[RMDB]
RNA sequence: GGGAACGACUCGAGUAGAGUCGAAAAGACAUCAAUGAACCCGGUAACAUUUGGGAAGACCAGGCGUCUAGUGUCCCUAUCCGUUGGAUCUCCGAGGAGAUCUACGGACAGUGGACGCCUUGAUCCAACUCACUUAUUGGUUCGCCAAUAAGUGAGUAAAAGAAACAACAACAACAAC
Reactivity to 2A3 in 0.01 (KOAc 150mM, MgCl2 10mM, bicine 150mM(pH8.5), 24C), signal-to-noise 9, nucleotides 027 to 126: g080a020c060a060u190c090a090a180u150g060a110a110c010c010c020g020g040u210a220a080c080a200u120u120u130g060g000g030a100a030g060a070c030c030a010g010g010c000g020u000c010u020a060g150u030g050u100c030c010c010u020a060u030c030c030g050u090u210g030g000a000u000c000u000c010c020g060a130g030g110a000g020a000u000c000u010a010c010g000g000a000c010a020g120u110g000g000a000c000g010c000c000u010u050g020a060u000c000c010a020
Reactivity to DMS in 0.01 (KOAc 150mM, MgCl2 10mM, bicine 150mM(pH8.5), 24C), signal-to-noise 7, nucleotides 027 to 126: g010a110c100a060u040c100a060a080u040g000a100a110c000c000c010g000g020u030a080a120c140a140u020u020u010g000g010g010a110a080g010a110c100c150a020g000g010c030g010u000c000u000a080g010u010g010u000c030c030c030u010a100u010c020c030g010u010u010g030g000a010u000c000u010c000c080g030a200g030g000a010g010a010u000c000u000a000c030g000g000a010c040a010g010u010g010g000a010c000g030c000c010u010u020g000a070u020c030c050a150